An RNA of 177 nucleotides, treated with DMS and read out base by base. Conditions: 150 mM KOAc, 10 mM MgCl2 and 150 mM bicine (pH 8.5), 24 C.

RNA sequence: GGGAACGACUCGAGUAGAGUCGAAAAUUAUGGAAGGUUGCUAGGCUUCCAGGUACCCCCUUCCAGGCUGUCAUCCCUCUCCCAAUCACCUAGGCCAGCCAUCAUCAUCUUUCCACUGGACAAUCACUGGCGAUAUGAUAUUCGUAUCAUAUCGCCAAAAAGAAACAACAACAACAAC
Reactivity to DMS in 0.01 (KOAc 150mM, MgCl2 10mM, bicine 150mM(pH8.5), 24C), signal-to-noise 1, nucleotides 027 to 126: u030u020a180u000g000g010a000a010g010g030u000u010g010c140u000a120g000g010c020u000u020c010c010a000g010g010u000a150c040c010c070c050c040u000u000c020c010a110g000g000c060u000g000u000c080a080u000c010c010c010u000c060u000c000c000c030a090a080u000c070a040c070c050u010a080g010g020c020c040a080g020c040c040a070u000c010a080u010c040a000u000c080u000u000u010c010c020a040c160u000g000g000a070c260a090a080u000c140a110c200

It was measured as part of the RMDB library OK2TRN. For DMS, 847 sequencing reads were counted.